[RMDB]
RNA sequence: GGGAACGACUCGAGUAGAGUCGAAAAGCGGCUGCUGCUCUCCGUUUAUCCCACCACUGCCACCAUUAUUGCUACUGUUCAGCAGGUGCUGCUGGUGGUGAUGGUGAUAGUCUGGUGGGGGCGGUGGAAGACGUCCGCUGUUCGCAGCGGACGUCUUAAAAGAAACAACAACAACAAC
Reactivity to 2A3 in 0.01 (KOAc 150mM, MgCl2 10mM, bicine 150mM(pH8.5), 24C), signal-to-noise 1, nucleotides 027 to 126: g050c030g010g050c080u180g000c010u000g010c000u000c000u010c030c000g000u000u170u000a220u150c000c000c000a000c000c000a040c000u000g030c000c000a000c030c010a000u000u050a030u040u160g050c000u050a070c010u060g030u050u130c000a000g000c030a090g180g130u160g080c000u000g020c010u000g060g000u000g000g000u000g020a030u000g030g010u010g030a000u000a040g030u060c120u130g020g000u010g000g000g000g000g000c010g010g000u090g030g020
The record gives the reactivity of an RNA of 177 nucleotides to 2A3. Source: RMDB library RFM100, as collected in RNAgym. The RNA was probed in 150 mM KOAc, 10 mM MgCl2 and 150 mM bicine (pH 8.5) at 24 C. For 2A3 the reverse transcriptase was SuperScript II with manganese.